An RNA of 177 nucleotides, treated with DMS and 2A3 and read out base by base. The data come from the RNA Mapping Database (RMDB), library 15KREP. For 2A3, 1,084 sequencing reads were counted. For 2A3 the reverse transcriptase was SuperScript II with manganese. For DMS the reverse transcriptase was MarathonRT. 2A3 is a SHAPE reagent: it acylates the 2'-hydroxyl of flexible nucleotides of all four kinds. The reactions ran in a buffer of 150 mM KOAc, 10 mM MgCl2 and 150 mM bicine (pH 8.5), at 24 C.

RNA sequence: GGGAACGACUCGAGUAGAGUCGAAAACUGACCUGACCCCUCCCCCAGCGGGUCGCCCAGGAAUGGCGGGACCCCACUUCAGCAGGGUCCGCGUUCCAUCCUUUCUUACCUGAUGGCCGGCAUGGUCCUAGUUAACCAAGUUCGCUUGGUUAACUAGAAAAGAAACAACAACAACAAC
Reactivity to DMS in 0.01 (KOAc 150mM, MgCl2 10mM, bicine 150mM(pH8.5), 24C), signal-to-noise 2, nucleotides 027 to 126: c080u020g000a070c050c010u010g020a300c040c000c010c030u000c000c000c000c010c010a120g010c040g040g000g030u000c060g000c020c010c000a070g020g000a060a010u000g010g040c000g010g010g010a030c010c000c000c030a060c140u010u000c200a070g030c130a110g000g000g000u000c000c000g030c010g010u000u000c000c000a090u020c100c030u000u000u000c070u000u010a100c070c020u000g000a070u000g010g020c010c030g000g010c080a080u000g030g010u010c090
Reactivity to 2A3 in 0.01 (KOAc 150mM, MgCl2 10mM, bicine 150mM(pH8.5), 24C), signal-to-noise 2, nucleotides 027 to 126: c020u050g090a070c030c010u040g200a190c000c000c020c020u000c000c000c010c000c000a010g000c020g000g030g010u010c010g000c000c000c000a000g060g100a040a070u110g300g230c060g040g030g060a060c010c000c000c000a070c050u250u240c060a090g030c030a050g000g010g000u010c000c000g020c000g000u020u000c010c010a020u050c020c010u050u140u000c010u020u030a150c040c020u130g060a060u080g040g000c000c000g130g090c070a080u220g030g000u040c000